[RMDB]
RNA sequence: GGGAACGACUCGAGUAGAGUCGAAAAUAGAGCUACUGGAUGGCCGAUGGGCCCCACAAGGUUACUGACGUCAGCCAAACUCCGAAUGCCAGAGUGUGAGAGCGCGGCAGUGAGACUGCGGGGGAUAUAUUGCAGAAAUAUUCGUAUUUCUGCAAUAAAAAGAAACAACAACAACAAC
Reactivity to DMS in 0.01 (KOAc 150mM, MgCl2 10mM, bicine 150mM(pH8.5), 24C), signal-to-noise 6, nucleotides 027 to 126: u010a100g010a090g020c030u000a080c090u000g010g010a110u010g010g010c030c020g000a100u000g020g010g000c010c010c020c060a090c190a110a160g000g010u000u010a050c020u000g000a230c300g000u000c050a110g010c010c020a030a110a070c010u000c010c050g000a090a100u010g000c100c050a100g010a040g010u000g010u000g000a110g000a090g010c040g020c050g000g010c020a030g010u000g000a110g000a290c030u000g010c160g010g000g010g000g010a120u010a100
Reactivity to 2A3 in 0.01 (KOAc 150mM, MgCl2 10mM, bicine 150mM(pH8.5), 24C), signal-to-noise 3, nucleotides 027 to 126: u110a020g060a030g040c040u100a040c050u050g050g050a090u030g050g000c000c010g030a050u070g040g020g020c000c000c000c010a150c020a070a040g040g040u050u090a230c010u020g030a020c010g030u060c040a000g010c020c000a040a060a040c010u000c020c020g070a200a050u150g050c070c020a040g040a030g060u080g000u070g050a140g000a020g070c030g010c020g030g020c000a010g010u040g060a080g000a030c020u030g010c010g000g020g010g000g010a000u030a010